[RMDB]
RNA sequence: GGGAACGACUCGAGUAGAGUCGAAAACCUGAUUAUUAUGUGCUUGGGAUAAUGAAAUAAGACCUCUGUUCUGCUUUCAUUGGAUUUCAGAUCAAGAGGUAAUGAUUAAUGGAAGCAAUUUGGGGGAGCCCGUAAUCAUAUUCGUAUGAUUACGGGCAAAAGAAACAACAACAACAAC
Reactivity to DMS in 0.01 (KOAc 150mM, MgCl2 10mM, bicine 150mM(pH8.5), 24C), signal-to-noise 1, nucleotides 027 to 126: c000c040u000g010a090u040u000a060u030u000a000u000g020u000g020c020u000u020g000g030g000a060u000a020a050u000g000a070a070a110u030a080a090g010a090c000c000u010c000u020g020u020u000c050u000g040c070u000u000u000c010a160u010u020g000g000a040u020u010u010c000a030g000a040u020c060a080a110g030a090g000g040u000a000a000u010g000a070u000u000a010a060u020g000g000a030a030g000c000a060a040u020u010u020g020g000g000g020g010a090
Reactivity to 2A3 in 0.01 (KOAc 150mM, MgCl2 10mM, bicine 150mM(pH8.5), 24C), signal-to-noise 3, nucleotides 027 to 126: c000c000u000g060a030u000u120a070u100u060a020u130g080u040g040c020u070u090g040g070g040a030u050a190a020u100g120a130a050a140u200a070a020g050a030c000c030u000c000u010g060u050u060c050u030g010c000u030u010u010c020a080u040u100g140g020a040u010u030u110c120a070g090a080u070c020a090a160g010a040g130g040u040a020a020u030g010a000u050u060a080a000u050g070g020a020a000g000c010a020a030u070u120u210g020g000g020g030g000a020